The data come from the RNA Mapping Database (RMDB), library M2RFPK.
The record gives the reactivity of an RNA of 207 nucleotides to DMS and 2A3.
High 2A3 reactivity points to a flexible backbone, as in loops and unpaired stretches.
For 2A3 the reverse transcriptase was SuperScript II with manganese.
RNA sequence: GGGAACGACUCGAGUAGAGUCGAAAAGAUCUGCGCCGAUCCGAAACGCUAGCAAACAGCCCGCAUCAUGUCGUCUCCUAACUUCAACGUGGUGAAAUACUGAGCUUAUGCGAGUAAGCCUGUUAGCAAUAGAUCAGAACGUUCGCGUUCUGAUCAACCAAACAGUGUUGUUCGCAACACUGUUUGGAAAAGAAACAACAACAACAAC
Reactivity to DMS in 0.01 (KOAc 150mM, MgCl2 10mM, bicine 150mM(pH8.5), 24C), signal-to-noise 1, nucleotides 027 to 156: g010a060u000c010u030g030c060g040c030c030g090a100u010c040c050g000a080a050a050c130g000c020u000a040g010c040a050a070a080c090a140g030c050c000c010g000c010a040u000c060a040u030g020u000c030g030u010c020u000c060c000u000a060a090c110u010u000c030a070a120c040g000u010g000g070u000g000a080a100a100u000a060c060u000g000a080g000c000u000u000a020u000g000c170g030a130g010u000a020a060g010c020c020u010g000u000u000a070g020c060a040a080u000a150g000a060u000c000a020g000a030a030c000g080u020u000c300g000c050g030u010u000c000u000g000a000u000c010a030a130
Reactivity to 2A3 in 0.01 (KOAc 150mM, MgCl2 10mM, bicine 150mM(pH8.5), 24C), signal-to-noise 5, nucleotides 027 to 156: g030a030u020c030u060g030c040g020c020c050g020a060u000c030c020g060a040a070a010c070g000c050u040a020g010c060a060a020a090c030a060g030c000c020c020g050c020a030u040c030a020u110g060u060c020g040u040c060u050c060c030u080a080a100c030u110u100c060a050a040c040g060u080g000g040u040g060a040a030a030u180a090c030u050g000a020g040c000u020u030a020u090g070c060g000a030g050u020a000a030g000c000c010u040g020u080u060a040g030c020a080a100u040a170g000a000u000c000a000g000a000a000c010g010u070u050c220g000c000g080u000u000c030u000g010a000u000c000a000a000